Source information: An RNA of 177 nucleotides, treated with DMS and 2A3 and read out base by base. The reactions ran in a buffer of 150 mM KOAc, 10 mM MgCl2 and 150 mM bicine (pH 8.5), at 24 C. For 2A3, 2,138 sequencing reads were counted. Values cover nucleotides 27 to 126. DMS adducts were read by reverse transcription with MarathonRT.
RNA sequence: GGGAACGACUCGAGUAGAGUCGAAAAUUAAAGGAGGAGGUGAAAUAUAGCGAGAGAUCGGUCCUCCCACGCGCGUCUCGCGCUGAUAAGAGGAAUAAGAGGAUGAUUAAUAGAUAGCGCGCAAAAACAAUAAACUCUACUUCGGUAGAGUUUAUUGAAAAGAAACAACAACAACAAC
Reactivity to DMS in 0.01 (KOAc 150mM, MgCl2 10mM, bicine 150mM(pH8.5), 24C), signal-to-noise 4, nucleotides 027 to 126: u000u000a090a080a070g000g010a040g020g000a050g010g010u000g010a060a070a100u000a140u000a070g020c040g010a070g000a070g020a050u000c040g000g020u010c020c030u010c010c040c040a070c150g000c030g010c030g010u010c070u010c060g000c020g010c020u000g010a090u010a080a100g000a050g010g020a070a080u000a080a090g000a070g010g000a050u010g000a060u010u010a060a090u010a070g010a080u000a040g000c040g020c030g020c120a030a050a080a080a110
Reactivity to 2A3 in 0.01 (KOAc 150mM, MgCl2 10mM, bicine 150mM(pH8.5), 24C), signal-to-noise 2, nucleotides 027 to 126: u120u080a080a030a030g050g010a040g000g010a020g010g010u050g010a040a170a000u250a050u100a060g040c000g020a030g010a000g000a060u030c020g010g020u010c020c000u010c000c000c000a050c030g010c000g030c000g060u050c040u110c100g000c000g000c020u010g020a030u040a130a060g040a050g040g070a070a020u120a110a070g020a040g090g010a040u040g010a020u120u120a110a080u020a060g070a030u070a040g000c020g010c020g020c070a120a000a000a070a000